[RMDB]
RNA sequence: GGGAACGACUCGAGUAGAGUCGAAAAAGCUUGUCCAAGGUCGCCUCGCCGAUAAACGCGAGUCCAACCAGACCCCUUGGGCCUCCGUUUCCCGGUGGCAUUCGUAGGUUUUGGCCAGUAGGAGACCCUAUCCAUACCUGUUCGCAGGUAUGGAUAGAAAAGAAACAACAACAACAAC
Reactivity to 2A3 in 0.01 (KOAc 150mM, MgCl2 10mM, bicine 150mM(pH8.5), 24C), signal-to-noise 4, nucleotides 027 to 126: a010g050c070u070u060g020u010c010c010a050a030g020g020u050c040g020c010c000u000c010g000c010c020g190a220u210a090a150a010c030g000c020g010a000g010u040c060c020a030a060c020c010a020g070a120c020c010c000c000u020u040g040g000g000c000c010u030c020c010g040u020u060u020c030c010c000g000g050u030g010g020c050a070u060u070c080g080u130a140g100g010u090u050u070u120g100g000c010c020a030g030u060a050g030g040a050g020a040c050c000
Reactivity to DMS in 0.01 (KOAc 150mM, MgCl2 10mM, bicine 150mM(pH8.5), 24C), signal-to-noise 7, nucleotides 027 to 126: a090g010c130u000u000g020u000c020c030a100a070g020g010u000c120g000c150c010u000c020g020c010c050g010a130u000a030a080a080c200g010c020g010a020g000u000c050c030a050a090c070c060a130g000a130c050c040c020c080u000u000g010g000g010c030c010u010c050c020g010u000u000u000c030c030c010g010g010u000g010g010c070a060u000u000c070g010u010a100g010g010u010u000u000u010g020g010c030c060a080g010u010a090g000g000a070g010a060c060c040

The record gives the reactivity of an RNA of 177 nucleotides to 2A3 and DMS. The RNA was probed in 150 mM KOAc, 10 mM MgCl2 and 150 mM bicine (pH 8.5) at 24 C. It was measured as part of the RMDB library OK2TST. The 2A3 profile rests on 6,537 reads. For 2A3 the reverse transcriptase was SuperScript II with manganese. Values cover nucleotides 27 to 126.